[RMDB]
RNA sequence: GGGAACGACUCGAGUAGAGUCGAAAAUUAUGUGCUCAAAAUCAAGAAAUCAAGUGAGCAGAACGCAUAAAGUCACGGAUUUCAGUGGUUUAAGUAAGCCAUGUCCAAUUAACACUUUCACUUUUCAGUUUAGGCCACAGCUGCCAAAUAUUUACUAGGACUGAUGAUGAUUCGUCAUCAUCAGUCCAAAAGAAACAACAACAACAAC
Reactivity to 2A3 in 0.01 (KOAc 150mM, MgCl2 10mM, bicine 150mM(pH8.5), 24C), signal-to-noise 1, nucleotides 027 to 156: u190u160a070u090g030u090g000c000u000c010a060a060a160a160u020c030a120a000g030a000a010a000u120c030a120a240g130u080g030a090g000c000a010g090a060a030c130g050c130a100u090a030a080a000g100u130c030a000c060g030g000a030u000u020u000c060a140g040u030g050g140u010u000u010a000a090g000u030a030a010g000c030c000a040u060g000u000c020c010a000a050u140u250a300a020c030a030c030u140u140u160c060a130c060u070u180u150u100c030a140g040u030u030u090a070g020g020c020c040a100c060a220g040c180u060g030c000c010a000a030a000u180a010u030u240u130a100c070u030a000